An RNA of 207 nucleotides, treated with 2A3 and DMS and read out base by base. Source: RMDB library OK3TST, as collected in RNAgym.
RNA sequence: GGGAACGACUCGAGUAGAGUCGAAAACUCAGAGACAGCACAGACCCCACAGGUCAAGGGCAGAUCCUUCAAUUCUGACACUAACUGCCUGGAGUUAGCAUCAGACCUAAAAGUUAAAGGGUGAGAUCACCAACAAGACUCCUCUUAUUUCAGACAAGGUGAGGUAAUGAUUCGUCAUUACCUCACCAAAAGAAACAACAACAACAAC
Reactivity to 2A3 in 0.01 (KOAc 150mM, MgCl2 10mM, bicine 150mM(pH8.5), 24C), signal-to-noise 2, nucleotides 027 to 156: c050u060c030a020g000a000g020a110c060a030g000c110a030c020a020g020a040c000c010c000c000a070c040a070g000g000u050c020a000a050g020g040g000c020a000g020a110u080c000c050u040u120c040a070a140u100u060c030u090g040a010c010a030c100u090a140a030c000u020g040c080c000u040g010g000a010g000u040u010a000g000c000a010u080c020a000g000a040c000c000u080a100a090a020a000g060u040u080a130a070a030g060g030g000u190g030a010g010a070u040c050a040c000c020a080a040c040a080a020g020a040c010u030c020c000u020c070u090u060a120u010u200u060c030a020g080a110c060a110a080
Reactivity to DMS in 0.01 (KOAc 150mM, MgCl2 10mM, bicine 150mM(pH8.5), 24C), signal-to-noise 1, nucleotides 027 to 156: c040u000c040a100g000a070g010a130c040a300g070c070a040c090a170g010a060c030c000c020c070a140c090a090g010g040u020c040a140a070g000g020g020c040a140g010a100u000c040c010u000u010c090a070a100u000u000c000u010g070a050c030a100c030u000a010a070c020u000g010c040c070u000g070g020a230g000u000u010a000g040c010a040u000c020a030g000a120c090c070u000a040a050a070a040g000u000u000a070a040a030g000g020g050u020g020a050g010a110u000c040a100c140c020a030a070c150a070a120g000a100c010u010c000c010u000c020u010u000a040u000u010u000c020a120g000a220c100a010a130
The 2A3 profile rests on 958 reads. Conditions: 150 mM KOAc, 10 mM MgCl2 and 150 mM bicine (pH 8.5), 24 C. High DMS reactivity at an A or C suggests that its Watson-Crick edge is free. Values cover nucleotides 27 to 156.